RNA sequence: GGGAACGACUCGAGUAGAGUCGAAAAGAUAUGGAACAGGACUAUCCCAACCCACCUGGGAGCUGAGCAUCGGAAACGAUGUAACAGCAUCGAUCAGGUUGGGUUGGGAUAGUCCUGUUCCUAAGUCGUUUAGAUGCGAGUUCGCUCGCAUCUAAACAAAAGAAACAACAACAACAAC
Reactivity to DMS in 0.01 (KOAc 150mM, MgCl2 10mM, bicine 150mM(pH8.5), 24C), signal-to-noise 1, nucleotides 027 to 126: g030a070u010a300u000g000g000a010a010c000a020g030g010a050c000u000a000u000c020c020c020a010a000c000c000c000a050c010c000u030g000g020g000a070g030c000u030g010a300g010c010a020u010c000g030g020a150a080a270c010g040a020u000g000u000a120a100c030a000g020c000a190u000c210g010a130u010c020a010g010g000u020u030g020g010g000u000u000g000g050g000a000u000a000g000u000c000c010u000g000u000u010c020c000u000a020a090g000u010c100